Source: RMDB library TTRDES, as collected in RNAgym.
An RNA of 177 nucleotides, treated with DMS and 2A3 and read out base by base.
For DMS, 858 sequencing reads were counted.
For 2A3, 1,916 sequencing reads were counted.
Reactivities are given for positions 27 through 126.
RNA sequence: GGGAACGACUCGAGUAGAGUCGAAAAGAUAUGGAGAUCUAACCUCGGGACCUUGGACCUUUAUCGGAAACGAUAAAGCUAGGUCAUUUAGAGUCUCCUAAGUCAAAACCCGCUGUUCGCAGCGGGAGUCUAGUGUGAGGUUCGCCUCACACUAGACAAAAGAAACAACAACAACAAC
Reactivity to DMS in 0.01 (KOAc 150mM, MgCl2 10mM, bicine 150mM(pH8.5), 24C), signal-to-noise 1, nucleotides 027 to 126: g030a050u000a290u000g020g000a020g010a210u000c000u010a040a040c300c150u020c220g030g000g010a000c010c020u000u010g010g000a040c300c020u000u000u010a000u000c010g000g000a050a020a170c000g010a000u000a030a000a010g010c020u020a020g040g000u010c000a130u000u000u000a020g000a080g000u000c000u000c010c020u000a020a150g000u000c040a180a060a110a130c000c000c010g010c020u000g000u000u010c200g000c040a040g030c010g010g000g010a030
Reactivity to 2A3 in 0.01 (KOAc 150mM, MgCl2 10mM, bicine 150mM(pH8.5), 24C), signal-to-noise 2, nucleotides 027 to 126: g000a000u090a080u100g010g010a000g000a010u050c020u060a060a140c040c200u180c300g250g270g010a010c030c030u150u300g060g130a140c020c000u010u090u000a010u000c020g000g000a050a010a050c010g000a000u000a000a000a000g000c000u000a000g000g000u040c060a000u030u040u020a050g020a050g250u000c010u000c000c000u000a150a020g070u050c060a010a000a150a300c010c000c000g000c000u040g020u040u120c300g010c190a000g000c040g020g000g080a000